[RMDB]
RNA sequence: GGGAACGACUCGAGUAGAGUCGAAAAGGAGGCAACUGGCACUCCCGGCAACGCCGCCUUGGAGGAGAGCAAGGAGCAGUCGCAGCUCGCCGCAGAUGCCGGCGCCGCGCUUGUCGGCAACGUCCAGCAAUGACGAUGCGUUCGCGCAUCGUCAUUGAAAAGAAACAACAACAACAAC
Reactivity to 2A3 in 0.01 (KOAc 150mM, MgCl2 10mM, bicine 150mM(pH8.5), 24C), signal-to-noise 1, nucleotides 027 to 126: g030g000a020g040g000c050a150a020c120u030g020g000c020a020c030u000c000c020c000g020g030c010a030a000c030g020c010c020g000c000c030u040u060g120g020a150g120g080a130g010a060g070c040a050a050g070g000a030g000c000a050g120u130c030g000c140a030g000c020u020c010g040c000c010g000c000a030g030a300u170g100c090c040g010g010c010g020c020c010g000c010g000c050u000u000g020u020c000g000g000c010a040a000c050g000u000c010c000a000g000
Reactivity to DMS in 0.01 (KOAc 150mM, MgCl2 10mM, bicine 150mM(pH8.5), 24C), signal-to-noise 2, nucleotides 027 to 126: g010g000a030g010g000c070a070a170c030u010g000g040c050a160c070u000c040c000c020g030g010c020a050a060c030g020c020c080g030c000c010u010u010g010g010a110g010g010a100g010a080g000c030a090a090g050g020a050g020c020a070g000u000c120g000c080a140g010c010u000c020g020c050c020g040c020a130g010a140u010g020c100c040g000g010c010g000c030c170g020c030g020c140u000u000g000u000c020g000g000c080a020a050c150g010u000c010c010a060g000
Conditions: 150 mM KOAc, 10 mM MgCl2 and 150 mM bicine (pH 8.5), 24 C. An RNA of 177 nucleotides, treated with 2A3 and DMS and read out base by base. The DMS profile rests on 1,621 reads. It was measured as part of the RMDB library OK2TRN. Values cover nucleotides 27 to 126.